[RMDB]
RNA sequence: GGGAACGACUCGAGUAGAGUCGAAAAGAUAUGGAUGUUUGGCGACUUUAUUAUUAGAGGGAGUCGCAUAUCGGAAACGAUAUACGACAUCGAUCUCUAAUAAUAAAGUCGCCAUGCAUCCUAAGUCGACUUCAAGAAAGUUCGCUUUCUUGAAGUCAAAAGAAACAACAACAACAAC
Reactivity to DMS in 0.01 (KOAc 150mM, MgCl2 10mM, bicine 150mM(pH8.5), 24C), signal-to-noise 1, nucleotides 027 to 126: g020a110u010a300u000g000g000a020u000g000u000u000u000g010g000c000g010a030c000u000u000u000a000u010u000a000u010u000a000g010a020g000g000g010a040g010u000c000g040c020a010u000a000u000c000g000g000a170a080a300c010g010a010u000a000u000a030c000g000a000c000a300u000c150g010a090u020c010u000c000u000a000a000u000a010a000u000a000a000a010g000u000c000g020c000c000a000u000g000c000a000u010c000c000u000a010a090g000u000c140
Notes
Chemical mapping of a 177-nucleotide RNA with DMS. In probing experiments dimethyl sulfate is read out at A N1 and C N3, which are open when not base-paired. The RNA was probed in 150 mM KOAc, 10 mM MgCl2 and 150 mM bicine (pH 8.5) at 24 C. The data come from the RNA Mapping Database (RMDB), library TTRINS.